This 207-nucleotide RNA was probed chemically with 2A3 and DMS.

RNA sequence: GGGAACGACUCGAGUAGAGUCGAAAAAAACCAAUCUGGGCAGAAGGUCCACCUAGUGUGGCAUACAAAGGGUCUUCUCUAAACAGCUCAGAGUAUUGCUGUACGAUACCACCCAUAGGAGCAAUACGUGAACCAAGAGAGACAUCCUCUCCUACAACGUAGAAGGUAUGUUCGCAUACCUUCUACGAAAAGAAACAACAACAACAAC
Reactivity to 2A3 in 0.01 (KOAc 150mM, MgCl2 10mM, bicine 150mM(pH8.5), 24C), signal-to-noise 5, nucleotides 027 to 156: a000a000a000c020c000a020a040u020c010u020g010g000g010c020a010g030a070a030g050g020u030c020c010a010c000c050u160a230g020u060g030u040g230g020c080a070u170a070c080a040a150a060g020g000g010u000c000u060u010c030u010c010u110a150a170a020c040a050g010c010u010c000a010g000a010g050u010a020u030u010g000c010u020g080u130a110c090g040a100u060a130c020c060a070c020c060c020a040u070a130g020g090a040g000c010a000a020u000a030c040g040u080g050a030a040c040c030a090a000g000a010g000a000g000a020c020a070u080c010c030u040c000u030c050c020u090a100c060a220a020
Reactivity to DMS in 0.01 (KOAc 150mM, MgCl2 10mM, bicine 150mM(pH8.5), 24C), signal-to-noise 2, nucleotides 027 to 156: a040a010a090c070c030a030a150u010c010u010g000g020g050c020a140g000a090a070g040g010u000c020c000a050c000c020u010a100g030u000g060u020g000g000c060a100u000a120c130a070a070a100g000g040g010u000c020u000u000c010u000c050u000a070a090a090c080a060g030c030u000c010a070g000a170g010u000a050u000u010g000c000u000g000u000a100c060g000a220u010a000c060c030a080c040c020c030a170u000a110g060g000a090g030c020a030a040u010a010c030g030u000g000a040a050c040c060a110a050g020a070g000a040g000a100c110a120u000c070c000u000c020u010c000c040u010a050c000a050a180